[RMDB]
RNA sequence: GGGAACGACUCGAGUAGAGUCGAAAAGAUAUGGAUCCUGAGGAGCAACAGCGAAUUCGGAAACGAAUUCGACAUGCUCAGCUCACAUGGAUCCUAAGUCAAAGCUGUGAGGUUCGCCUCACAGCAACUCCUAUUCUCUCUUCGGAGAGAAUAGGAGAAAAGAAACAACAACAACAAC
Reactivity to 2A3 in 0.01 (KOAc 150mM, MgCl2 10mM, bicine 150mM(pH8.5), 24C), signal-to-noise 3, nucleotides 027 to 126: g000a020u050a040u110g000g000a000u020c010c000u090g050a300g110g080a010g030c130a060a300c040a100g020c000g010a000a000u010u010c010g010g020a030a010a030c020g010a000a010u010u000c010g050a050c020a120u120g020c060u090c160a040g000c010u000c010a030c010a090u200g010g010a010u020c010c000u010a080a010g020u020c070a170a060a020g000c000u000g020u020g000a000g010g050u100u190c300g150c040c000u000c000a000c000a010g000c000a000a000
Reactivity to DMS in 0.01 (KOAc 150mM, MgCl2 10mM, bicine 150mM(pH8.5), 24C), signal-to-noise 3, nucleotides 027 to 126: g000a030u000a300u000g010g010a010u000c000c000u000g000a300g020g000a010g010c010a100a110c130a070g000c010g000a020a010u000u000c000g020g000a060a100a240c000g030a010a000u000u000c000g010a050c100a080u000g010c110u010c270a170g010c000u000c010a070c120a060u010g010g000a020u000c000c000u000a000a110g010u000c020a090a080a160g010c000u000g010u000g010a020g000g000u010u010c280g010c000c000u000c000a000c010a000g010c000a010a030